Conditions: 150 mM KOAc, 10 mM MgCl2 and 150 mM bicine (pH 8.5), 24 C.
This 177-nucleotide RNA was probed chemically with 2A3 and DMS.
For 2A3 the reverse transcriptase was SuperScript II with manganese.
For DMS the reverse transcriptase was MarathonRT.
Values are in units of 0.01, from 0 to 300, in steps of 10.
[RMDB]
RNA sequence: GGGAACGACUCGAGUAGAGUCGAAAACUCGACGAUCAUGGCAGCAUCAGCGACCAAAGCAAUCCGUUUGCUAUUGAACUCCCAGCCUGGGAGAUAUCCCUGAAGCGACUGGCUCAAGGGACGGGUCUUGGUAAGCCUCAUUCGUGAGGCUUACCAAAAAAGAAACAACAACAACAAC
Reactivity to 2A3 in 0.01 (KOAc 150mM, MgCl2 10mM, bicine 150mM(pH8.5), 24C), signal-to-noise 3, nucleotides 027 to 126: c020u020c020g080a050c010g020a060u080c000a020u080g030g000c010a050g000c000a030u050c030a030g030c020g090a030c020c020a030a080a000g000c000a000a040u020c070c140g050u030u060u000g020c020u090a110u080u070g040a030a020c000u000c000c000c000a050g140c040c100u130g000g060g020a070g020a020u120a030u050c000c000c000u010g010a050a000g010c010g240a300c120u110g070g060c000u020c030a100a040g030g000g000a000c020g040g000g000u020c010
Reactivity to DMS in 0.01 (KOAc 150mM, MgCl2 10mM, bicine 150mM(pH8.5), 24C), signal-to-noise 3, nucleotides 027 to 126: c030u000c000g020a090c200g000a080u000c030a090u000g010g000c060a000g000c090a020u000c040a040g000c100g010a150c060c060a080a090a110g000c020a080a060u000c100c080g000u030u000u000g020c030u010a100u000u000g000a090a140c020u000c000c010c000a120g020c080c110u010g040g000g010a010g020a100u050a040u000c000c010c000u000g010a130a140g000c020g050a140c130u000g010g020c050u010c080a140a040g000g000g000a020c060g010g000g010u000c080